[RMDB]
RNA sequence: GGGAACGACUCGAGUAGAGUCGAAAACCCUCGCUGCAUAAGCAAGCGACCGCGUGUCUGUCAGCCUAGGGAAGUCCCUGACCUAGAUCCUGGCAUCGACUAAGGGACUUGCUGUUCAAUCGCGUCAGCGGGGUUGAACAGGACUUUUACCGUUGACCCCUUCCCAUUUGUUCGCAAAUGGGAAGGGAAAAGAAACAACAACAACAAC
Reactivity to 2A3 in 0.01 (KOAc 150mM, MgCl2 10mM, bicine 150mM(pH8.5), 24C), signal-to-noise 4, nucleotides 027 to 156: c000c000c010u030c020g000c010u040g000c050a150u100a300a140g020c070a110a030g030c040g030a040c070c080g140c080g080u240g070u080c110u070g040u020c000a000g010c010c000u010a010g010g020g000a130a090g050u010c010c020c010u010g060a010c000c000u020a020g010a060u140c020c010u010g000g000c030a170u190c090g090a090c070u130a060a080g020g000g000a010c000u050u300g020c000u000g010u000u000c000a000a000u000c000g000c000g010u000c000a000g000c000g020g000g000g000u000u000g000a000a000c000a010g010g010a000c010u170u120u110u250a070c020c000g010u000u000g000a020c000